Chemical mapping of a 177-nucleotide RNA with DMS and 2A3. The RNA was probed in 150 mM KOAc, 10 mM MgCl2 and 150 mM bicine (pH 8.5) at 24 C.
RNA sequence: GGGAACGACUCGAGUAGAGUCGAAAAGCGGUGUAUUUGCGUGGGGGGUGAAUGUGGAUACGGACAAUGACAGGCCCACGCUGGCGAGGGUUUACCGCAGCCUGCGGGACAUUUGUCCGGACAGCUGGAGGUAGUACUAUUUCGAUAGUACUACCUCAAAAGAAACAACAACAACAAC
Reactivity to DMS in 0.01 (KOAc 150mM, MgCl2 10mM, bicine 150mM(pH8.5), 24C), signal-to-noise 9, nucleotides 027 to 126: g010c070g000g010u010g020u010a040u020u020u020g010c070g030u000g010g000g000g000g010g010u020g010a070a060u010g020u020g010g010a130u020a090c030g000g000a030c020a020a010u010g010a140c160a120g000g010c030c010c010a130c040g010c010u010g000g000c030g000a250g000g000g010u010u030u040a090c010c000g000c060a300g000c050c030u000g000c010g000g000g000a110c040a070u010u010u010g010u000c000c000g010g010a090c120a090g010c080u000g010
Reactivity to 2A3 in 0.01 (KOAc 150mM, MgCl2 10mM, bicine 150mM(pH8.5), 24C), signal-to-noise 9, nucleotides 027 to 126: g050c040g050g000u070g010u080a180u090u160u150g060c060g010u080g000g020g000g000g000g010u070g040a090a070u090g020u040g040g060a020u080a130c000g010g000a010c010a010a020u060g040a050c030a110g090g070c020c010c010a110c080g000c020u030g010g010c010g020a080g050g020g000u090u200u210a110c010c000g010c020a010g020c010c010u020g000c010g010g000g000a000c010a020u090u090u080g000u000c000c010g000g030a020c020a020g030c030u120g060
It was measured as part of the RMDB library OK1LIB.